[RMDB]
RNA sequence: GGGAACGACUCGAGUAGAGUCGAAAACAAAAACAAACGGAAAAAGAAGUAGAAAAGAAAAAUCUACUUCACGGACCGAAAACAAACAACGGCAUCCGACAGCCGAACAAAACAAAACAAAACAAAACGCAGUACAUGUGUUCGCACAUGUACUGCGAAAAGAAACAACAACAACAAC
Reactivity to 2A3 in 0.01 (KOAc 150mM, MgCl2 10mM, bicine 150mM(pH8.5), 24C), signal-to-noise 1, nucleotides 027 to 126: c000a000a100a000a210a000c080a000a110a000c000g000g140a000a080a160a000a000g060a020a010g000u000a000g100a040a210a170a000g290a000a010a010a050a010u000c000u000a000c000u000u000c000a000c000g000g000a040c060c000g230a000a040a070a000c070a030a060a000c100a090a000c010g000g100c000a130u090c010c100g090a040c030a030g080c010c000g090a040a020c100a050a130a000a000c140a040a040a000a000c070a030a270a090a000c020a000a170a080a000